[RMDB]
RNA sequence: GGGAACGACUCGAGUAGAGUCGAAAAACACAAGCCGGCUGCAUCACCAUACACACUGUCGCUAGUGCUGGAGGAUGCCUACGUGAUGCAGGUUCGGUCAGCGCUCAGCAACACUGGUGCUGCGCCAAAUAGCGCCGUAUUUCGAUACGGCGCUAUUAAAAGAAACAACAACAACAAC
Reactivity to 2A3 in 0.01 (KOAc 150mM, MgCl2 10mM, bicine 150mM(pH8.5), 24C), signal-to-noise 4, nucleotides 027 to 126: a000c110a000c060a090a020g030c020c040g040g000c050u090g020c030a000u010c000a000c000c000a040u100a190c090a030c030a010c100u070g050u190c070g060c150u070a030g010u040g050c070u010g000g050a040g080g020a090u180g030c000c020u090a040c030g100u120g060a090u150g000c030a000g020g050u060u050c020g080g050u010c010a010g000c000g000c040u070c110a000g010c000a000a080c030a030c120u100g070g000u000g010c020u010g000c010g010c000c000a020
Reactivity to DMS in 0.01 (KOAc 150mM, MgCl2 10mM, bicine 150mM(pH8.5), 24C), signal-to-noise 2, nucleotides 027 to 126: a040c180a130c070a120a130g000c100c000g000g000c000u000g000c000a000u020c000a070c000c020a160u030a240c090a080c220a140c220u000g010u010c030g020c090u000a110g040u000g050c080u000g000g040a070g000g010a000u100g010c040c050u000a120c170g000u020g020a050u040g010c060a000g000g000u010u030c060g020g000u000c070a020g000c020g000c000u000c080a030g000c020a030a030c060a140c170u000g040g000u000g030c030u000g000c110g000c000c040a050